[RMDB]
RNA sequence: GGGAACGACUCGAGUAGAGUCGAAAACAACAGGGAGGUUGGUGGUGGACGAGCCACUCGCCAACCGGGUCAGGACCGGAAGGAAGCAGCCCUAACGAGCCAGGCACGGGUCGCCGUGCCAGUACAACCCACGCAUAGAAUUCGUUCUAUGCGUGGGAAAAGAAACAACAACAACAAC
Reactivity to DMS in 0.01 (KOAc 150mM, MgCl2 10mM, bicine 150mM(pH8.5), 24C), signal-to-noise 2, nucleotides 027 to 126: c030a040a100c130a100g020g000g000a080g000g000u010u010g030g070u000g000g030u000g010g000a240c240g000a110g000c000c000a000c000u010c030g030c000c010a010a050c000c010g000g000g020u000c060a140g010g020a080c020c010g020g040a080a140g010g010a030a100g030c040a130g000c020c020c010u020a060a100c060g000a110g000c070c020a140g010g000c010a010c020g000g000g020u020c210g020c000c010g030u000g010c000c010a060g010u020a060c230a080a190
Reactivity to 2A3 in 0.01 (KOAc 150mM, MgCl2 10mM, bicine 150mM(pH8.5), 24C), signal-to-noise 2, nucleotides 027 to 126: c020a000a010c050a060g050g020g000a050g030g000u000u050g050g000u020g000g000u010g000g060a130c100g020a070g170c020c000a000c030u090c020g030c000c000a030a010c020c020g000g000g000u050c030a020g010g080a040c000c030g010g100a060a050g040g030a010a030g000c050a020g000c040c030c030u030a070a040c050g020a020g130c040c050a050g000g000c010a020c010g000g000g100u160c100g040c090c010g000u000g020c000c000a000g000u010a020c010a020a130